[RMDB]
RNA sequence: GGGAACGACUCGAGUAGAGUCGAAAAUGAUCAGAUCCAGUACCCCUACAUGCACAUCCGCACCAAGGACUUCCCGUGGGGAGCAUGCUCGCUCUUUGACACACACUGCUGGGAGGAGCAGAAGGGAAUGCUUGGUUAACUUCGGUUAACCAAGCAUAAAAGAAACAACAACAACAAC
Reactivity to 2A3 in 0.01 (KOAc 150mM, MgCl2 10mM, bicine 150mM(pH8.5), 24C), signal-to-noise 1, nucleotides 027 to 126: u080g020a050u090c040a060g040a090u040c030c040a060g070u140a100c010c010c000c000u040a050c020a090u060g060c090a060c000a090u050c030c020g060c000a060c040c030a020a040g120g030a090c030u040u010c070c000c000g020u030g000g050g030g010a010g100c030a020u080g010c060u030c080g100c010u060c040u000u040u090g190a130c010a020c000a000c000a020c130u020g050c000u010g030g000g010a010g000g000a010g000c030a000g040a060a040g000g010g110a130
Reactivity to DMS in 0.01 (KOAc 150mM, MgCl2 10mM, bicine 150mM(pH8.5), 24C), signal-to-noise 2, nucleotides 027 to 126: u000g010a060u000c060a100g000a070u000c010c010a070g020u000a150c050c020c000c030u000a110c130a120u010g030c090a080c130a080u000c070c090g010c080a040c060c130a050a050g000g020a100c090u000u000c010c010c040g000u000g040g000g010g000a030g040c080a060u020g010c090u000c050g040c020u010c040u000u010u010g000a100c080a060c140a100c150a130c100u000g000c030u000g000g040g000a080g010g010a060g040c050a010g000a110a050g050g000g000a100
Chemical mapping of a 177-nucleotide RNA with 2A3 and DMS.
The RNA was probed in 150 mM KOAc, 10 mM MgCl2 and 150 mM bicine (pH 8.5) at 24 C.